[RMDB]
RNA sequence: GGGAACGACUCGAGUAGAGUCGAAAAACCUUUGUGACCACCAAUGAUGGCGAUUGUAGUGGAGGGACCCAUUGGGUCUGCAACUCCACGCAGAUAAUCGCUUGAGGUGGUCACUCUGGUAAAGCGCUACAAUCCGAUUCGUCGGAUUGUAGCGCAACUUCCCAAUCUUGUUCGCAAGAUUGGGAAGAAAAGAAACAACAACAACAAC
Reactivity to 2A3 in 0.01 (KOAc 150mM, MgCl2 10mM, bicine 150mM(pH8.5), 24C), signal-to-noise 1, nucleotides 027 to 156: a010c010c010u020u000u020g000u000g000a020c000c000a030c020c020a210a300u190g010a060u130g060g000c000g000a000u010u060g010u070a280g000u020g010g010a030g000g010g010a010c000c030c050a090u230u300g030g030g010u000c010u020g080c070a070a140c000u020c000c000a000c000g020c000a000g010a010u220a060a020u040c000g000c030u000u000g000a010g000g000u000g010g000u000c000a000c000u000c000u000g080g000u030a170a100a020g000c010g060c000u000a020c020a000a000u080c000c040g030a040u090u060c290g060u000c000g160g000a000u050u020g010u000a010g000c000g000c000a000a000

An RNA of 207 nucleotides, treated with 2A3 and read out base by base. For 2A3 the reverse transcriptase was SuperScript II with manganese. For 2A3, 703 sequencing reads were counted. It was measured as part of the RMDB library RNAMAK.